[RMDB]
RNA sequence: GGGAACGACUCGAGUAGAGUCGAAAACGGCCGGCCGACGAGGGCAUGGCGUAUCGCGAGUUCCGCGACGCGCUGCGCGACGAGCAGCAGCGCUGGCGGCAGCGCACGCGCGAUGCGUGCGGUGCGAGGCCUAAUUAUACUUCGGUAUAAUUAGGCCAAAAGAAACAACAACAACAAC
Reactivity to DMS in 0.01 (KOAc 150mM, MgCl2 10mM, bicine 150mM(pH8.5), 24C), signal-to-noise 9, nucleotides 027 to 126: c070g010g020c010c010g010g010c010c010g010a130c220g010a200g000g010g010c020a030u000g020g020c020g020u000a070u000c020g010c020g010a180g010u010u010c040c010g010c010g010a130c130g010c000g010c000u000g000c020g000c010g000a150c200g010a270g010c030a090g030c030a030g000c030g020c000u000g000g010c030g010g010c090a100g010c010g000c030a010c020g000c000g010c220g000a100u010g010c000g010u000g000c010g010g000u000g010c020g010a100
Reactivity to 2A3 in 0.01 (KOAc 150mM, MgCl2 10mM, bicine 150mM(pH8.5), 24C), signal-to-noise 6, nucleotides 027 to 126: c030g090g020c020c000g010g020c010c020g120a300c140g080a150g140g050g000c050a080u160g020g000c030g020u040a050u090c020g000c030g050a060g120u170u030c030c000g000c010g020a040c060g000c000g010c010u020g000c020g010c010g030a190c120g030a030g000c110a030g000c000a000g000c030g000c010u010g040g010c020g020g000c010a010g060c010g000c000a000c020g040c010g010c110g130a060u260g000c010g000u010g000c010g010g090u080g010c020g030a040
This 177-nucleotide RNA was probed chemically with DMS and 2A3. For 2A3 the reverse transcriptase was SuperScript II with manganese.